[RMDB]
The data come from the RNA Mapping Database (RMDB), library RNAMAK. Structure probing data (2A3) for a 207-nucleotide construct. The reactions ran in a buffer of 150 mM KOAc, 10 mM MgCl2 and 150 mM bicine (pH 8.5), at 24 C.
RNA sequence: GGGAACGACUCGAGUAGAGUCGAAAAGGGGUCCAGAGCCGAGGAAUGACUUCGCAACAGCAUACUGAAGCCUCCACGGUAUGACAUGCGAACCAUUCUAUCUCUGGACGGAGGCACCCAAAAGCGGUAUUUGACUGUUCGCAGUCAAAUACCGCAACCAACCAUGUGAGUUCGCUCACAUGGUUGGAAAAGAAACAACAACAACAAC
Reactivity to 2A3 in 0.01 (KOAc 150mM, MgCl2 10mM, bicine 150mM(pH8.5), 24C), signal-to-noise 3, nucleotides 027 to 156: g030g010g070g010u000c000c000a000g000a020g090c190c210g290a180g070g000a010a010u010g010a020c040u010u000c010g000c040a100a260c060a240g020c010a010u010a000c010u030g030a130a020g000c000c010u000c000c000a020c000g000g010u000a010u030g040a210c080a160u260g000c010g010a000a010c010c020a030u010u000c030u080a240u270c010u010c000u010g000g000a000c010g000g000a000g000g000c040a050c030c010c010a070a090a010a010g000c000g000g000u010a000u010u000u000g000a000c010u010g060u070u250c300g000c140a000g010u030c000a020a000a000u020a000c000c020g000c000a000a000